[RMDB]
Chemical mapping of a 177-nucleotide RNA with 2A3 and DMS.
2A3 adducts were read by reverse transcription with SuperScript II with manganese.
For DMS the reverse transcriptase was MarathonRT.
The RNA was probed in 150 mM KOAc, 10 mM MgCl2 and 150 mM bicine (pH 8.5) at 24 C.
DMS (dimethyl sulfate) methylates the pairing face of unpaired adenines and cytosines.
RNA sequence: GGGAACGACUCGAGUAGAGUCGAAAAAACAAUACUUAAGCUGCUGACGCGUCAUCAUUCCCCAAAUGACUCGGCAGUAGAGGUGCCAAAGGACUCGCGCGCCUUUGUUUUACUCCUAAUGGUCUUGUCAGGGUUAUGUAUUCGUACAUAACCCUGAAAAAGAAACAACAACAACAAC
Reactivity to 2A3 in 0.01 (KOAc 150mM, MgCl2 10mM, bicine 150mM(pH8.5), 24C), signal-to-noise 4, nucleotides 027 to 126: a000a020c140a030a030u170a070c060u160u130a060a040g030c000u000g010c000u000g000a030c010g020c010g060u020c010a000u000c000a120u060u150c020c000c000c000a010a010a020u010g000a000c000u020c010g010g000c000a000g010u000a020g010a010g000g020u030g020c010c010a050a060a040g090g050a060c050u030c080g040c010g020c000g010c010c000u030u000u000g020u010u020u020u040a050c020u040c000c000u060a090a100u200g050g010u010c000u040u030g040
Reactivity to DMS in 0.01 (KOAc 150mM, MgCl2 10mM, bicine 150mM(pH8.5), 24C), signal-to-noise 4, nucleotides 027 to 126: a020a030c080a070a050u020a060c140u030u050a110a120g000c010u000g000c000u000g000a040c070g010c130g030u010c010a010u010c040a160u000u000c010c000c000c020a080a090a010u000g010a020c000u000c020g000g000c000a030g010u000a020g040a050g010g010u000g010c060c050a040a080a080g010g030a060c070u000c120g010c080g010c040g010c000c010u000u000u010g000u010u000u010u020a130c190u000c010c000u000a060a090u030g000g020u000c020u000u000g000